[RMDB]
RNA sequence: GGGAACGACUCGAGUAGAGUCGAAAAUUUAUUAGGAAUCAUAGCAGUGCAUAGUAUUCAGGAGAAGAUGCAUGGAGGAGCUGGAGAAAAUUAGUGGUAGAUUGCCAAGAGAUUUCAACAACAGAUUUUAACGCUUGGAUUACCGAGACCAGUUAGAAAAUCGGUACGAUUUCGAUCGUACCGAUUUAAAAGAAACAACAACAACAAC
Reactivity to 2A3 in 0.01 (KOAc 150mM, MgCl2 10mM, bicine 150mM(pH8.5), 24C), signal-to-noise 1, nucleotides 027 to 156: u060u040u000a190u030u120a020g010g010a070a030u090c030a080u010a090g120c010a000g100u020g020c010a020u050a220g040u050a110u040u120c070a010g090g050a120g010a060a060g030a000u100g010c000a040u010g020g000a000g010g010a000g010c000u000g000g010a010g000a060a240a000a040u100u070a030g010u020g020g000u000a040g080a280u020u040g010c000c040a050a000g000a000g000a020u180u220u280c000a010a010c020a040a040c040a080g130a110u000u010u060u280a130a000c020g000c060u020u020g000g010a010u000u000a010c060c000g010a010g020a030c030c000a010g040u080u130a010g120a080
Reactivity to DMS in 0.01 (KOAc 150mM, MgCl2 10mM, bicine 150mM(pH8.5), 24C), signal-to-noise 1, nucleotides 027 to 156: u000u000u000a060u030u000a150g000g000a090a060u000c030a130u000a120g060c030a070g130u000g020c020a080u000a050g040u000a080u000u000c090a090g030g010a180g040a100a070g000a130u000g020c040a040u010g040g010a080g040g010a140g040c030u000g030g010a160g010a030a130a090a090u000u010a060g010u000g000g030u010a060g010a160u000u000g000c020c020a050a070g000a150g000a150u000u020u020c040a040a140c060a060a130c090a240g010a090u000u000u000u030a040a080c020g000c000u000u010g080g020a090u000u000a060c070c010g010a140g020a050c020c040a080g020u000u030a180g000a080
The record gives the reactivity of an RNA of 207 nucleotides to 2A3 and DMS. The data come from the RNA Mapping Database (RMDB), library OK3TST. Reactivities are given for positions 27 through 156. For 2A3 the reverse transcriptase was SuperScript II with manganese. The RNA was probed in 150 mM KOAc, 10 mM MgCl2 and 150 mM bicine (pH 8.5) at 24 C.